[RMDB]
RNA sequence: GGGAACGACUCGAGUAGAGUCGAAAAUCAUUAGACUGUUAUUCUGGAUCGAAACCUACAGUUUAAUCAAGGGAAUCUAACUGAUUUCGUAAAUUUAUUUUCUUUACCAGAGUAUUUCGAAGUCCGAGGCAUAUAGGCGAUUCGUCGCCUAUAUGCCAAAAGAAACAACAACAACAAC
Reactivity to 2A3 in 0.01 (KOAc 150mM, MgCl2 10mM, bicine 150mM(pH8.5), 24C), signal-to-noise 2, nucleotides 027 to 126: u110c000a010u050u050a030g030a000c020u050g010u050u070a030u080u050c000u010g000g010a020u060c130g060a050a020a090c030c040u040a040c010a020g000u050u060u280a180a110u250c080a060a030g140g000g050a050a050u020c050u130a010a170c080u060g000a020u000u040u040c020g030u040a000a080a230u050u220u190a080u030u040u080u040c020u000u000u130a300c000c000a000g000a000g080u020a090u050u020u000c030g100a050a000g050u000c050c040g070a090
This 177-nucleotide RNA was probed chemically with 2A3. Source: RMDB library OK1LIB, as collected in RNAgym. 2A3 adducts were read by reverse transcription with SuperScript II with manganese.